[RMDB]
Structure probing data (2A3) for a 207-nucleotide construct.
RNA sequence: GGGAACGACUCGAGUAGAGUCGAAAAUAUCAAAGCCGCAACCAGCACCGUAACAAACAAUGUUCACCACAAUACGACCAGUAUUAUAACAAGCUACGUCCACCGUAACGAACAAACACUACAGCAAGCUACAACUGCCAAAACCGCAACAACGAACGACGUGCAGGAUAUUCGUAUCCUGCACGUCAAAAGAAACAACAACAACAAC
Reactivity to 2A3 in 0.01 (KOAc 150mM, MgCl2 10mM, bicine 150mM(pH8.5), 24C), signal-to-noise 1, nucleotides 027 to 156: u160a020u130c040a050a080a030g080c030c010g000c020a020a030c010c040a000g090c010a020c020c020g010u110a070a000c010a110a060a010c040a050a170u060g060u010u040c050a060c030c020a060c040a130a040u110a160c070g090a120c070c000a010g040u060a040u070u090a070u040a020a100c070a070a000g050c010u050a040c010g010u000c030c010a050c110c000g030u050a040a050c110g040a030a010c060a050a060a060c060a000c050u060a050c010a000g020c020a090a040g000c010u010a000c040a090a020c010u000g000c010c020a060a070a000a060c030c000g000c020a000a050c030a000a080c250g160a000a030c040
The 2A3 profile rests on 506 reads.
Values cover nucleotides 27 to 156.